An RNA of 177 nucleotides, treated with 2A3 and DMS and read out base by base. 2A3 adducts were read by reverse transcription with SuperScript II with manganese. Values cover nucleotides 27 to 126. It was measured as part of the RMDB library OK2TRN.
RNA sequence: GGGAACGACUCGAGUAGAGUCGAAAAGGCACUCAUGGACACCCAUAGAACACCACGAGUUCACGGUAAAUCUGAUUCACAGAUGUGAACUGAAUACCGUGGUGAAGUGUCCUUCUAUGGGAGUGCAGCAGAGCUGUACAUUCGUGUACGGCUCUGCAAAAGAAACAACAACAACAAC
Reactivity to 2A3 in 0.01 (KOAc 150mM, MgCl2 10mM, bicine 150mM(pH8.5), 24C), signal-to-noise 6, nucleotides 027 to 126: g070g000c000a000c010u020c020a090u160g040g020a020c020a020c020c000c000a000u010a000g030a030a010c020a000c030c000a000c010g030a020g060u090u070c000a000c010g010g020u050a080a080a080u010c010u010g060a300u100u090c050a040c020a120g300a300u250g110u000g010a010a010c000u010g010a020a030u050a100c020c010g010u000g000g000u000g010a040a020g010u010g020u030c010c000u010u000c010u010a010u010g000g000g000a000g000u000g000c000a000
Reactivity to DMS in 0.01 (KOAc 150mM, MgCl2 10mM, bicine 150mM(pH8.5), 24C), signal-to-noise 9, nucleotides 027 to 126: g010g010c020a020c010u000c050a120u010g000g010a130c200a110c070c010c020a020u000a010g000a030a090c090a010c250c010a010c010g000a140g010u000u000c000a010c020g010g010u010a040a110a070u000c010u010g010a210u010u010c130a100c010a140g010a050u010g020u000g000a030a030c030u000g010a080a100u010a050c290c010g010u000g000g010u000g000a060a100g000u000g010u000c110c280u000u000c020u000a010u000g000g000g000a020g010u000g020c000a110